[RMDB]
RNA sequence: GGGAACGACUCGAGUAGAGUCGAAAAACAGAAAAGGAAAAAUUAAAUACAGGCCAUGAAAUUUUACAGAUCCAACCGCGGGAAGUGGCAAGUAAUGGGUUGGAAGCAGAUGAUGAGACAGAUAUUAUACUAGUAAAUCAUUCGUGAUUUACUAGUAAAAAGAAACAACAACAACAAC
Reactivity to DMS in 0.01 (KOAc 150mM, MgCl2 10mM, bicine 150mM(pH8.5), 24C), signal-to-noise 3, nucleotides 027 to 126: a120c070a100g000a050a070a050a100g010g010a050a050a080a120a090u000u000a040a050a080u010a190c040a070g000g020c010c030a030u000g000a060a130a080u000u010u010u000a110c100a080g000a110u000c010c020a050a040c030c060g030c090g000g000g020a060a090g030u010g000g000c040a070a060g020u000a060a050u000g000g010g000u000u000g000g000a050a090g010c050a040g020a050u010g010a050u000g020a090g000a040c100a040g010a120u000a060u000u010a110
Structure probing data (DMS) for a 177-nucleotide construct. Source: RMDB library OK2TST, as collected in RNAgym. For DMS the reverse transcriptase was MarathonRT. The reactions ran in a buffer of 150 mM KOAc, 10 mM MgCl2 and 150 mM bicine (pH 8.5), at 24 C. Values cover nucleotides 27 to 126.